An RNA of 177 nucleotides, treated with 2A3 and DMS and read out base by base.
For DMS the reverse transcriptase was MarathonRT.
Reactivities are given for positions 27 through 126.
Source: RMDB library OK2TST, as collected in RNAgym.
2A3 adducts were read by reverse transcription with SuperScript II with manganese.
In probing experiments dimethyl sulfate is read out at A N1 and C N3, which are open when not base-paired.

[RMDB]
RNA sequence: GGGAACGACUCGAGUAGAGUCGAAAAAGUACGAGAGUGAGUUGAUGACAUACCGCUUUAUUCAAGAAGAGGCACCGCAAAUGCUUCCAUACCGUAGACUUGCCGCCGUGCUGUAUGGCAUUGCGGACGACUGGGACUGAUUCGUCAGUCCCAGUCGAAAAGAAACAACAACAACAAC
Reactivity to 2A3 in 0.01 (KOAc 150mM, MgCl2 10mM, bicine 150mM(pH8.5), 24C), signal-to-noise 1, nucleotides 027 to 126: a030g060u030a030c080g020a030g010a020g130u060g070a060g030u040u000g090a290u150g060a050c000a030u140a060c000c000g000c050u010u100u180a180u000u130c090a060a030g040a090a000g000a130g020g000c050a000c020c000g130c060a040a040a080u100g050c030u050u000c030c030a090u040a030c000c000g030u040a030g070a110c030u050u100g010c030c000g080c000c020g000u010g030c000u000g090u220a110u230g040g010c000a000u010u080g000c010g000g000a030
Reactivity to DMS in 0.01 (KOAc 150mM, MgCl2 10mM, bicine 150mM(pH8.5), 24C), signal-to-noise 1, nucleotides 027 to 126: a070g010u000a060c110g000a070g030a110g000u000g000a090g020u000u020g010a080u010g000a080c240a090u000a090c060c040g030c050u000u000u000a100u000u010c210a030a180g000a090a070g030a030g020g020c060a030c060c040g000c170a060a020a170u040g000c060u000u000c060c040a080u000a100c060c050g000u010a040g010a080c160u000u020g000c000c000g010c020c030g020u000g030c010u000g000u030a030u030g010g000c020a010u000u000g010c030g030g010a090
The DMS profile rests on 974 reads.